[RMDB]
RNA sequence: GGGAACGACUCGAGUAGAGUCGAAAAGCAGGCGGCAGCUCUGCGCGCGGCGGAAGCUUCCCUUGCCCGCAAGCGCGCCGAUGUGCUGGCAGCCAACAAAGCGCGCGCCGCCGCCGAGGCCGCCCUCCUCUUACGGACAUUUCGAUGUCCGUAAGAGAAAAGAAACAACAACAACAAC
Reactivity to 2A3 in 0.01 (KOAc 150mM, MgCl2 10mM, bicine 150mM(pH8.5), 24C), signal-to-noise 2, nucleotides 027 to 126: g060c080a030g000g020c020g020g000c040a090g110c080u000c030u070g000c000g010c070g000c000g010g010c000g020g060a100a020g040c010u050u090c000c030c000u000u080g010c000c000c030g050c050a070a020g010c030g010c010g000c060c020g170a160u200g000u060g040c030u050g060g000c020a010g040c020c000a020a030c040a030a080a020g010c000g010c020g000c010g020c030c000g000c030c010g010c000c020g010a020g030g000c000c000g000c000c000c000u040c000
Reactivity to DMS in 0.01 (KOAc 150mM, MgCl2 10mM, bicine 150mM(pH8.5), 24C), signal-to-noise 3, nucleotides 027 to 126: g010c100a150g000g030c010g020g000c020a110g020c020u020c050u000g030c010g010c210g020c000g010g000c020g030g000a150a270g010c110u000u020c050c080c060u000u010g010c080c000c060g000c070a060a100g000c020g010c040g030c030c050g000a170u000g010u010g030c030u000g010g020c060a060g020c090c050a040a070c090a040a210a080g020c020g000c080g020c040g020c000c010g000c000c010g000c000c020g000a060g000g010c020c000g000c000c000c050u010c080